[RMDB]
RNA sequence: GGGAACGACUCGAGUAGAGUCGAAAAGAGGCGAAAUAAUUCCCAUCUCCUAUGUACGGCCGGAGAUGGGUCUGGCCGUACUAAUAAGCCUCAUAGUGACGAGAGUCACGAAUUCUGGAUAGCCUUUGGUAGUCGGCUAUCCUUUGACUACCGUAGAACUAUACUAGCUCUUCGGAGCUAGUAUAGUAAAAGAAACAACAACAACAAC
Reactivity to 2A3 in 0.01 (KOAc 150mM, MgCl2 10mM, bicine 150mM(pH8.5), 24C), signal-to-noise 2, nucleotides 027 to 156: g010a000g000g000c010g100a110a100a020u220a070a040u110u050c000c020c020a030u050c060u010c010c010u070a040u140g000u000a000c000g000g000c000c030g070g010a090g030a080u300g150g000g000u000c000u000g000g000c010c000g000u020a000c010u000a020a020u050a010a000g000c000c000u020c010a030u150a040g010u030g010a000c010g010a000g010a000g110u000c010a000c010g000a010a040u190u020c040u100g040g000a030u040a030g000c000c000u070u050u130g030g060u060a060g020u040c020g010g010c010u000a050u110c000c000u050u050u040g000a000c000u020a050c010c010g090u080a030g050a130
Reactivity to DMS in 0.01 (KOAc 150mM, MgCl2 10mM, bicine 150mM(pH8.5), 24C), signal-to-noise 2, nucleotides 027 to 156: g010a040g000g020c020g010a090a080a110u000a110a250u000u000c020c010c020a150u000c040u010c030c020u010a170u000g000u000a050c030g010g020c040c050g020g010a100g030a160u020g010g000g000u000c040u000g020g010c000c030g000u020a080c020u000a060a070u000a090a230g000c040c020u020c020a140u010a120g000u000g000a010c010g000a300g000a300g000u000c000a000c000g000a090a090u010u000c070u020g010g000a160u000a050g000c040c000u000u010u000g030g010u000a070g030u000c140g010g000c010u000a050u010c080c030u000u000u000g010a050c050u000a020c030c000g060u000a120g000a140
An RNA of 207 nucleotides, treated with 2A3 and DMS and read out base by base. The 2A3 profile rests on 1,454 reads. Conditions: 150 mM KOAc, 10 mM MgCl2 and 150 mM bicine (pH 8.5), 24 C. For 2A3 the reverse transcriptase was SuperScript II with manganese.